[RMDB]
RNA sequence: GGGAACGACUCGAGUAGAGUCGAAAACCACAGAUCUUCGGAUCUGUGGAAACAACAAAUACUGUCAGUUGAGACAGACACAAAUACUUUGAGUGUACAAUGAAAGCGAUUGCUUCGGCAAUCGCAACGUGGUAAAUAGCUUCGGCUAUUUACCACGAAAAGAAACAACAACAACAAC
Reactivity to DMS in 0.01 (KOAc 150mM, MgCl2 10mM, bicine 150mM(pH8.5), 24C), signal-to-noise 2, nucleotides 027 to 126: c000c000a000c010a000g000a000u000c000u000u030c230g040g000a010u000c000u010g020u000g000g010a000a080a030c080a050a060c180a100a090a090u010a100c040u000g020u010c060a180g000u000u000g020a130g000a020c000a000g000a150c020a040c050a050a090a140u000a060c140u000u000u010g000a170g000u020g020u010a090c230a110a040u010g000a070a100a180g010c000g000a010u000u010g000c030u000u030c140g010g000c000a000a000u030c010g030c000a000a000
Reactivity to 2A3 in 0.01 (KOAc 150mM, MgCl2 10mM, bicine 150mM(pH8.5), 24C), signal-to-noise 4, nucleotides 027 to 126: c000c000a010c000a010g010a000u000c000u070u190c290g130g000a000u000c000u010g000u010g000g000a020a030a010c040a020a000c020a030a070a030u150a100c020u030g010u010c040a150g060u190u120g140a070g010a110c000a000g070a040c000a000c010a010a190a050u220a120c100u120u130u170g040a040g050u050g020u070a060c080a110a130u220g090a170a050a030g010c000g000a000u000u010g020c000u010u040c090g040g000c000a010a010u000c000g000c010a000a000